[RMDB]
The record gives the reactivity of an RNA of 177 nucleotides to DMS and 2A3. Conditions: 150 mM KOAc, 10 mM MgCl2 and 150 mM bicine (pH 8.5), 24 C. Source: RMDB libraries RFM100 and RFMREP, as collected in RNAgym. Values cover nucleotides 27 to 126. For 2A3 the reverse transcriptase was SuperScript II with manganese.
RNA sequence: GGGAACGACUCGAGUAGAGUCGAAAAUCGAAGCUCCCUUCCUAACGGGCGGCGGGCUGAAUCCUUUGCAGACGACUUAAAACGCGACGGGGCAUUGUAAGUGGCAGAGUGGCCUUGCUGCCACGAUGGGUUAUUGUUGUUUCGACAACAAUAACCCAAAAGAAACAACAACAACAAC
Reactivity to DMS in 0.01 (KOAc 150mM, MgCl2 10mM, bicine 150mM(pH8.5), 24C), signal-to-noise 3, nucleotides 027 to 126: u010c120g020a090a060g010c020u000c000c010c000u000u000c000c000u000a140a130c180g000g000g030c080g000g000c110g000g000g000c000u000g000a140a060u000c060c010u000u010u000g020c050a010g000a130c090g000a080c040u010u020a040a100a100a120c070g010c040g010a070c090g000g000g000g000c100a070u000u000g010u010a090a100g000u000g010g020c000a010g000a070g000u000g010g030c010c020u020u000g020c010u000g000c000c000a000c040g010a090u010
Reactivity to 2A3 in 0.01 (KOAc 150mM, MgCl2 10mM, bicine 150mM(pH8.5), 24C), signal-to-noise 3, nucleotides 027 to 126: u140c020g010a040a000g030c020u010c000c000c000u020u040c020c000u100a100a040c070g040g040g020c010g010g000c030g000g020g030c000u020g010a050a080u100c030c000u040u040u090g020c040a050g020a130c030g010a050c040u070u160a090a040a020a030c050g020c010g030a040c030g030g020g030g000c020a020u040u090g080u080a140a050g000u030g040g000c000a000g010a030g020u100g060g000c010c010u010u240g030c040u010g010c000c000a000c000g020a020u030